[RMDB]
RNA sequence: GGGAACGACUCGAGUAGAGUCGAAAAACCAUAGAGGAUUGGUCCUGGCGCAUUUGGGACGCAGACAGCAUCAUCUUCCUCACGGUCGACUGUAUCCCACACUGCUGGAUAUUGCCUUUUGGCAGCCUCGAAUACCGAUUUCUCAUCGACAUCACGGCCACCAGCCAUAAUUCGUUAUGGCUGGUGGAAAAGAAACAACAACAACAAC
Reactivity to 2A3 in 0.01 (KOAc 150mM, MgCl2 10mM, bicine 150mM(pH8.5), 24C), signal-to-noise 3, nucleotides 027 to 156: a000c020c000a020u090a050g040a000g000g010a030u050u120g040g010u070c070c050u070g060g040c050g000c020a090u120u100u050g000g020g050a060c060g000c010a000g040a120c020a040g110c020a040u060c020a020u030c090u050u020c060c010u080c060a010c110g020g020u050c020g050a060c010u010g010u020a020u000c000c050c000a000c020a000c040u050g010c000u070g060g000a040u040a070u200u090g000c010c000u120u140u110u100g020g000c000a000g010c000c020u020c050g000a020a070u090a140c020c020g040a080u060u060u040c030u030c040a080u060c010g090a050c000a060u120c080a050c070g100g000